An RNA of 170 nucleotides, treated with 2A3 and DMS and read out base by base. The data come from the RNA Mapping Database (RMDB), library 15KLIB. For 2A3 the reverse transcriptase was SuperScript II with manganese. DMS (dimethyl sulfate) methylates the pairing face of unpaired adenines and cytosines.
RNA sequence: GGGAACGACUCGAGUAGAGUCGAAAACGAACAGAAGAGCCCCGCACGGGAUAGGAGUAAGACCAUAGCGAUGGGGGGAGAUGCUAGGAGUUGGGGGAGACCGAAGCGAGGAGGAAAGUAAAGAAAGUAGCCCUGUGCUUCGGCACAGGGAAAAGAAACAACAACAACAAC
Reactivity to 2A3 in 0.01 (KOAc 150mM, MgCl2 10mM, bicine 150mM(pH8.5), 24C), signal-to-noise 2, nucleotides 027 to 129: c040g010a070a020c000a070g080a150a030g010a000g030c090c030c000c080g090c040a070c030g000g000g000a000u070a090g000g000a050g000u110a000a040g070a000c000c000a080u000a010g060c000g020a130u160g000g000g000g010g000g000a060g010a040u060g040c070u100a050g050g080a070g040u050u040g020g000g000g050g000a020g000a000c020c010g010a000a010g020c040g000a030g060g000a030g000g000a000a030a000g020u120a010a000a020g020a100a060a000g030u070a010g030
Reactivity to DMS in 0.01 (KOAc 150mM, MgCl2 10mM, bicine 150mM(pH8.5), 24C), signal-to-noise 1, nucleotides 027 to 129: c130g050a120a090c150a030g050a060a020g030a000g000c110c000c030c030g060c200a040c240g000g000g030a060u120a040g040g000a080g030u080a060a000g010a050c120c060a030u000a170g000c130g010a080u080g010g000g010g000g110g060a000g010a000u030g030c150u080a020g000g000a060g050u010u060g050g250g030g000g000a130g020a110c020c070g020a050a050g000c200g000a090g020g000a110g010g000a020a040a110g000u060a000a040a120g050a090a070a030g010u000a000g000